[RMDB]
RNA sequence: GGGAACGACUCGAGUAGAGUCGAAAAGGACACCCUCCACCCCCACCCCUCACCCCACACAGGGCGGGUUCAGGCGUGCCCGGCAGCCAGUAGCCUCUGGCAGAUCUGACAGACGUGUGCGAUAAUACGUAACCUAUCAAUUCGUUGAUAGGUUACGAAAAGAAACAACAACAACAAC
Reactivity to 2A3 in 0.01 (KOAc 150mM, MgCl2 10mM, bicine 150mM(pH8.5), 24C), signal-to-noise 5, nucleotides 027 to 126: g040g010a010c010a060c050c000c010u000c000c010a030c000c000c000c000c000a020c010c000c010c010u030c030a040c000c000c010c010a050c000a010c030a070g050g050g000c020g020g030g000u030u090c030a040g000g070c040g060u060g030c010c010c000g000g010c020a010g030c010c000a010g020u080a040g040c010c030u060c010u030g020g000c000a020g020a110u060c040u060g040a030c030a060g050a040c020g070u030g020u030g040c030g050a060u080a190a070u120a150
Reactivity to DMS in 0.01 (KOAc 150mM, MgCl2 10mM, bicine 150mM(pH8.5), 24C), signal-to-noise 5, nucleotides 027 to 126: g010g000a130c110a070c020c020c010u000c010c030a150c050c020c020c020c030a170c050c030c000c000u000c050a100c030c030c010c040a100c120a090c150a100g000g000g010c040g000g010g000u020u000c110a060g000g030c020g020u000g000c020c010c040g000g020c030a120g000c040c030a010g000u030a110g010c050c050u020c040u020g010g020c030a070g020a060u010c020u000g020a100c060a060g000a080c060g010u000g030u000g020c030g000a070u060a050a060u050a140
An RNA of 177 nucleotides, treated with 2A3 and DMS and read out base by base. Reactivities are rounded to 0.1 and cut off at 0 and 3. Conditions: 150 mM KOAc, 10 mM MgCl2 and 150 mM bicine (pH 8.5), 24 C. 2A3 is a SHAPE reagent: it acylates the 2'-hydroxyl of flexible nucleotides of all four kinds.